[RMDB]
Chemical mapping of a 207-nucleotide RNA with 2A3 and DMS. The DMS profile rests on 4,520 reads. The RNA was probed in 150 mM KOAc, 10 mM MgCl2 and 150 mM bicine (pH 8.5) at 24 C.
RNA sequence: GGGAACGACUCGAGUAGAGUCGAAAAUGUGGAUUCCCCGUCCCAGCGCCAGUGGCUCUUAGGGUAGGGGUUGUAACGGAAGGCAAUAAUCACAUCAUCCAAUAGGGUCAUGCCCACCUUGACGUUCAGCGGGCCCUCUCGUUUCAGGUCCGGCGUGUCUAAGGGAAGUUUUCGAACUUCCCUUAGAAAAAGAAACAACAACAACAAC
Reactivity to 2A3 in 0.01 (KOAc 150mM, MgCl2 10mM, bicine 150mM(pH8.5), 24C), signal-to-noise 3, nucleotides 027 to 156: u170g020u050g050g020a080u050u090c000c000c000c010g020u050c020c000c010a040g000c030g020c040c050a190g040u190g080g000c000u030c030u170u220a150g000g000g030u100a130g030g000g010g000u000u060g050u040a060a010c030g010g000a010a010g000g030c030a030a070u120a110a010u150c030a030c010a110u120c000a030u050c050c100a070a080u130a150g030g000g000u070c060a060u180g060c000c000c000a020c010c020u010u070g070a030c010g020u030u080c030a030g050c040g000g050g020c020c000c010u030c010u030c040g040u010u090u090c030a030g000g010u020c010c000g020g010c030g020u070g020
Reactivity to DMS in 0.01 (KOAc 150mM, MgCl2 10mM, bicine 150mM(pH8.5), 24C), signal-to-noise 2, nucleotides 027 to 156: u010g040u000g020g000a180u000u000c020c010c000c020g010u000c000c000c010a140g040c080g060c020c020a180g040u000g050g000c050u010c020u000u010a170g030g020g000u010a110g030g020g030g020u020u010g030u000a060a160c050g020g020a050a060g010g010c030a090a110u010a060a160u040c060a070c060a090u000c040a100u000c030c020a070a150u010a110g010g030g000u000c030a070u000g000c000c000c030a070c060c030u010u000g000a050c040g010u000u000c090a060g000c010g060g040g030c010c010c000u000c030u000c060g010u010u000u000c120a020g000g010u000c040c000g010g010c050g020u000g010